[RMDB]
RNA sequence: GGGAACGACUCGAGUAGAGUCGAAAACCCGGGGUGGCCAGGAGAGCACCGUAAACUCUUCAGCCUGCUCCGUGGCCGCGAUCUCGGAAAAAGCACCAAUUCUGUGAUGUGCAGCAGCAUUUACUGGCACUGUGCUACCUUUCGAGGUAGCACAGUGAAAAGAAACAACAACAACAAC
Reactivity to 2A3 in 0.01 (KOAc 150mM, MgCl2 10mM, bicine 150mM(pH8.5), 24C), signal-to-noise 1, nucleotides 027 to 126: c010c000c000g000g000g000g020u030g020g040c070c090a120g000g040a050g000a010g000c100a040c080c030g130u150a040a080a100c030u000c000u080u040c010a010g000c030c000u070g000c000u000c010c020g050u160g070g000c000c000g010c030g000a070u030c010u020c000g010g010a010a120a020a020a020g050c050a020c040c050a050a130u130u020c020u080g080u080g110a100u050g030u080g000c020a030g000c000a030g030c020a020u100u110u090a090c030u100g050g010
Reactivity to DMS in 0.01 (KOAc 150mM, MgCl2 10mM, bicine 150mM(pH8.5), 24C), signal-to-noise 2, nucleotides 027 to 126: c030c010c000g030g000g020g010u000g030g030c030c030a130g000g010a020g000a020g000c080a080c100c230g000u010a060a110a090c020u000c030u000u010c020a270g000c100c010u000g000c000u010c000c010g020u030g020g000c030c060g000c060g000a050u000c010u010c000g030g020a020a060a030a070a090g010c040a080c040c120a040a130u010u000c030u000g000u000g010a020u000g000u010g030c010a080g000c070a080g020c100a050u020u000u000a070c050u020g000g000